[RMDB]
RNA sequence: GGGAACGACUCGAGUAGAGUCGAAAAGACUGCGUGCACUCGAGACGAUAUCGAGCCGGAAAUUAAUCGAUAAUGUCUCUUGUAGUGGAUACGAUCCGGCAAGUAUCGACUACCUGUGCUCGUAGGACCCGGAUAAUGAGUUCGCUCAUUAUCCGGGAAAAGAAACAACAACAACAAC
Reactivity to DMS in 0.01 (KOAc 150mM, MgCl2 10mM, bicine 150mM(pH8.5), 24C), signal-to-noise 1, nucleotides 027 to 126: g000a220c020u000g020c030g030u000g000c070a010c010u030c300g000a000g030a020c010g000a050u000a000u000c010g000a110g000c000c000g000g000a070a060a090u060u000a090a230u000c000g000a040u000a010a110u010g000u030c000u010c040u000u000g050u020a010g000u010g000g000a000u070a030c000g040a080u020c000c010g000g000c000a130a130g000u000a000u000c000g030a040c010u000a000c030c300u010g020u010g010c000u000c010g040u000a020g000g010a070
Reactivity to 2A3 in 0.01 (KOAc 150mM, MgCl2 10mM, bicine 150mM(pH8.5), 24C), signal-to-noise 4, nucleotides 027 to 126: g060a010c000u000g000c010g020u030g000c000a000c010u020c020g000a010g000a000c000g020a010u010a000u060c020g000a010g000c000c000g070g070a070a120a040u250u220a070a160u290c000g000a010u020a050a110u110g010u010c010u000c000u050u210g070u030a050g000u020g120g000a000u000a010c000g000a030u000c000c000g020g000c030a050a010g000u000a000u010c030g040a000c000u040a090c000c050u050g000u000g000c000u000c010g010u000a000g000g000a000
The record gives the reactivity of an RNA of 177 nucleotides to DMS and 2A3. DMS adducts were read by reverse transcription with MarathonRT. The DMS profile rests on 1,406 reads. It was measured as part of the RMDB library OK1LIB. For 2A3, 4,295 sequencing reads were counted.